The record gives the reactivity of an RNA of 177 nucleotides to DMS and 2A3.
Reactivities are given for positions 27 through 126.

[RMDB]
RNA sequence: GGGAACGACUCGAGUAGAGUCGAAAACGACGCAGGUUCGCCUGCGUCGCACUACCGAGAAUGCGACUCGGUAUAUUAAAACGCGCCUUGCAAACAAGGCAAAUAAGGCCAGAUUCGUCUGGCCUAAUAACAAUAUUAACUUCGGUUAAUAUUGUUAAAAAGAAACAACAACAACAAC
Reactivity to DMS in 0.01 (KOAc 150mM, MgCl2 10mM, bicine 150mM(pH8.5), 24C), signal-to-noise 5, nucleotides 027 to 126: c010g010a010c000g020c000a010g000g010u000u010c230g020c000c010u000g010c000g010u000c000g000c050a090c040u000a020c000c000g000a000g010a020a060u010g020c040g010a030c000u000c000g000g000u000a000u010a010u010u010a020a010a010a030c030g040c070g020c000c010u000u000g000c300a130a160a200c030a010a010g000g010c010a040a050a070u020a100a030g000g010c000c000a000g000a040u000u010c190g010u000c000u000g000g000c000c000u000a000a030
Reactivity to 2A3 in 0.01 (KOAc 150mM, MgCl2 10mM, bicine 150mM(pH8.5), 24C), signal-to-noise 4, nucleotides 027 to 126: c000g000a000c000g000c010a000g010g040u040u100c120g110c040c000u000g010c000g000u000c000g000c010a030c010u020a010c000c000g000a000g010a070a130u140g010c020g030a030c010u000c010g000g060u010a030u000a000u060u120a010a010a010a000c020g020c010g000c020c000u020u010g040c090a050a120a150c000a110a000g020g000c000a000a030a010u070a010a000g000g000c000c000a010g000a030u030u050c120g080u010c070u010g000g000c000c000u000a000a000